Structure probing data (DMS) for a 177-nucleotide construct. For DMS, 1,512 sequencing reads were counted. Conditions: 150 mM KOAc, 10 mM MgCl2 and 150 mM bicine (pH 8.5), 24 C.
RNA sequence: GGGAACGACUCGAGUAGAGUCGAAAAUGAAAGCUCCGUGAUGUUAACAACAAAAUUGUUGAUGAUUUUAUCAAUAAGCUUUUUACAAAGAACUUUGUUGAAUAUGUUGAUAAAAGUGAUAGCGUAAGCCCGAUAAUUUAUUCGUAAAUUAUCGGGCAAAAGAAACAACAACAACAAC
Reactivity to DMS in 0.01 (KOAc 150mM, MgCl2 10mM, bicine 150mM(pH8.5), 24C), signal-to-noise 2, nucleotides 027 to 126: u010g020a090a220a160g020c040u020c060c050g020u010g010a120u000g000u000u000a060a070c000a020a050c040a100a080a090a300u000u010g030u020u000g000a050u020g000a150u010u000u000u000a000u000c000a010a010u010a060a110g010c150u000u000u010u000u010a010c030a000a040a040g010a150a100c140u000u000u000g000u000u000g000a010a050u010a050u000g020u000u000g000a010u000a020a020a010a000g010u000g000a080u000a050g020c050g000u000a090a100